[RMDB]
RNA sequence: GGGAACGACUCGAGUAGAGUCGAAAACUACCUAGAAGAAGAAAUACCAUGAUUAGGACUCUGGCUCAAGGAGACAAUCAAAUAGUAAUUACUACAUACAGACCGAGACAGUGGUCAUGUGAUGAGGCGCAGUCACCAAAUUCGUUUGGUGACUGCGAAAAGAAACAACAACAACAAC
Reactivity to DMS in 0.01 (KOAc 150mM, MgCl2 10mM, bicine 150mM(pH8.5), 24C), signal-to-noise 1, nucleotides 027 to 126: c060u040a010c040c020u000a180g030a070a150g000a090a020g000a020a020a050u000a140c020c050a140u000g000a000u000u000a120g000g000a050c080u020c050u030g040g000c080u050c080a130a220g030g020a060g000a170c080a030a050u010c070a020a120a070u000a090g020u000a050a030u000u000a090c050u000a110c100a040u040a000c090a000g000a030c000c000g000a160g020a140c220a000g020u090g050g000u010c000a080u020g000u020g000a010u000g000a100g000g000
Reactivity to 2A3 in 0.01 (KOAc 150mM, MgCl2 10mM, bicine 150mM(pH8.5), 24C), signal-to-noise 2, nucleotides 027 to 126: c050u180a100c030c030u040a010g060a240a010g050a070a050g090a000a130a060u210a100c060c070a060u100g000a140u110u160a060g080g110a110c010u000c120u080g020g040c080u070c140a020a020g040g000a000g060a030c020a010a000u020c060a010a160a100u160a050g050u010a000a120u050u020a050c060u090a040c040a040u040a040c010a060g000a000c000c010g020a040g130a120c070a070g050u050g300g000u040c030a030u030g050u010g050a160u030g010a000g000g020